The data come from the RNA Mapping Database (RMDB), library OK1LIB. Structure probing data (DMS and 2A3) for a 177-nucleotide construct. The 2A3 profile rests on 109,521 reads.
RNA sequence: GGGAACGACUCGAGUAGAGUCGAAAAACUAGUAUGUACAGGGGUGAGUUGACCUGUCAUCUAGACUGCUGACCAUCAACUCACCGGUCAGCUGGAUGAUGUCCACAGAGUACGACAUCAGUACACAGUGUAAUGACUAGUUCGCUGGUCGUUACACAAAAGAAACAACAACAACAAC
Reactivity to DMS in 0.01 (KOAc 150mM, MgCl2 10mM, bicine 150mM(pH8.5), 24C), signal-to-noise 9, nucleotides 027 to 126: a240c010u000a010g010u040a010u000g000u060a000c000a020g010g010g000g010u010g010a070g020u000u000g010a060c010c030u000g000u000c000a010u000c010u000a020g010a170c070u000g000c020u000g000a010c000c060a190u020c100a040a050c090u010c060a070c150c110g000g000u000c000a010g010c000u000g000g010a070u010g000a020u000g000u000c010c120a100c190a160g010a150g010u020a100c230g000a020c010a010u000c010a050g000u030a080c130a040c200a110
Reactivity to 2A3 in 0.01 (KOAc 150mM, MgCl2 10mM, bicine 150mM(pH8.5), 24C), signal-to-noise 9, nucleotides 027 to 126: a000c010u010a000g060u140a060u060g070u090a010c010a010g030g030g040g050u150g100a150g050u060u070g090a070c000c010u000g010u000c000a000u000c000u010a020g080a120c050u040g000c000u000g000a000c000c000a050u110c050a050a090c060u030c090a060c030c050g000g000u000c000a000g000c010u010g040g010a020u040g000a000u010g010u000c020c020a060c070a100g120a030g090u090a040c040g000a000c000a010u010c010a010g050u110a040c080a000c010a030
Conditions: 150 mM KOAc, 10 mM MgCl2 and 150 mM bicine (pH 8.5), 24 C. The DMS profile rests on 68,087 reads. For 2A3 the reverse transcriptase was SuperScript II with manganese. Reactivities are given for positions 27 through 126.